The data come from the RNA Mapping Database (RMDB), library OK3TST. Chemical mapping of a 207-nucleotide RNA with DMS and 2A3. Values cover nucleotides 27 to 156. The reactions ran in a buffer of 150 mM KOAc, 10 mM MgCl2 and 150 mM bicine (pH 8.5), at 24 C. For 2A3, 2,163 sequencing reads were counted.
[RMDB]
RNA sequence: GGGAACGACUCGAGUAGAGUCGAAAAUCUUACUGUGGCACUGGGUCCUUAAACAUUAUGCAAAACUGUGAGCAACUUUUAUCGGUUUGUUCUUUUAAGAACAUAACACAGCACUCUAAAAAUAGAUCUAACUAGAUUGUUCACAUCUAGCGAUUAAGAUGAAAAUCCUAUUCGUAGGAUUUUCAUCAAAAGAAACAACAACAACAAC
Reactivity to DMS in 0.01 (KOAc 150mM, MgCl2 10mM, bicine 150mM(pH8.5), 24C), signal-to-noise 2, nucleotides 027 to 156: u000c020u000u010a070c030u000g020u000g030g040c040a040c060u010g040g010g010u010c000c030u000u000a050a110a140c070a110u010u010a060u010g000c030a080a110a080a070c050u000g000u000g000a090g000c040a080a070c060u000u000u000u000a140u010c120g000g010u000u000u020g020u000u010c040u000u010u000u000a090a120g030a040a050c010a000u000a060a070c020a050c050a060g000c040a070c070u000c030u000a090a040a120a060a150u000a060g010a070u000c020u000a090a040c020u000a010g000a050u000u010g020u010u000c030a100c110a070u000c020u000a070g010c000g020a120u000u010a040a190
Reactivity to 2A3 in 0.01 (KOAc 150mM, MgCl2 10mM, bicine 150mM(pH8.5), 24C), signal-to-noise 4, nucleotides 027 to 156: u020c010u020u060a060c030u100g010u040g040g030c010a030c070u030g050g030g070u060c010c010u040u070a040a060a000c010a050u110u150a080u260g000c030a020a040a090a080c060u030g010u020g020a010g000c020a050a060c030u040u090u110u160a180u230c060g020g000u020u050u020g000u000u010c000u000u140u090u180a140a040g000a020a000c000a000u190a080a010c070a000c010a030g040c000a020c060u080c060u130a100a120a090a050a060u090a060g020a030u080c000u030a010a060c000u010a010g040a210u020u060g040u140u110c000a020c010a050u000c030u040a000g010c000g040a040u070u150a100a030